Annotation:
The record gives the reactivity of an RNA of 177 nucleotides to 2A3 and DMS. The data come from the RNA Mapping Database (RMDB), library OK1LIB. DMS (dimethyl sulfate) methylates the pairing face of unpaired adenines and cytosines. 2A3 adducts were read by reverse transcription with SuperScript II with manganese. Conditions: 150 mM KOAc, 10 mM MgCl2 and 150 mM bicine (pH 8.5), 24 C. The DMS profile rests on 1,877 reads.

[RMDB]
RNA sequence: GGGAACGACUCGAGUAGAGUCGAAAACACAGCAGACGAGCCUGGUUGGGAGGACGUGAUGUCAAGGUGCGUCAUUACCAUUCCACGUGGUGGGUAAUGGGCGACUGUGCAGCGAGGAACGGGGCCACCCGCAUAGCCUUUUCGAAGGCUAUGCGGGAAAAGAAACAACAACAACAAC
Reactivity to 2A3 in 0.01 (KOAc 150mM, MgCl2 10mM, bicine 150mM(pH8.5), 24C), signal-to-noise 2, nucleotides 027 to 126: c060a030c000a020g090c070a040g010a150c040g030a060g050c010c000u060g020g110u090u070g020g000g010a060g040g000a010c050g040u060g080a090u070g020u220c100a090a010g140g040u120g020c020g030u000c020a000u000u000a060c000c000a140u070u050c010c000a050c270g080u190g100g040u020g040g050g040u080a050a070u040g040g060g000c000g020a040c020u040g000u040g100c010a020g000c040g010a000g040g000a030a040c030g030g000g010g000c000c000a020
Reactivity to DMS in 0.01 (KOAc 150mM, MgCl2 10mM, bicine 150mM(pH8.5), 24C), signal-to-noise 1, nucleotides 027 to 126: c050a080c020a020g000c080a010g000a180c150g000a150g030c000c090u010g000g020u010u000g000g000g020a030g000g010a050c070g030u090g000a050u030g030u000c090a110a050g010g000u000g000c030g010u000c000a000u000u000a010c040c000a020u000u030c020c030a100c200g000u050g000g010u050g020g000g000u020a020a030u000g010g010g000c000g000a090c030u010g000u030g020c030a090g010c080g050a120g000g020a050a100c130g030g030g040g000c020c040a150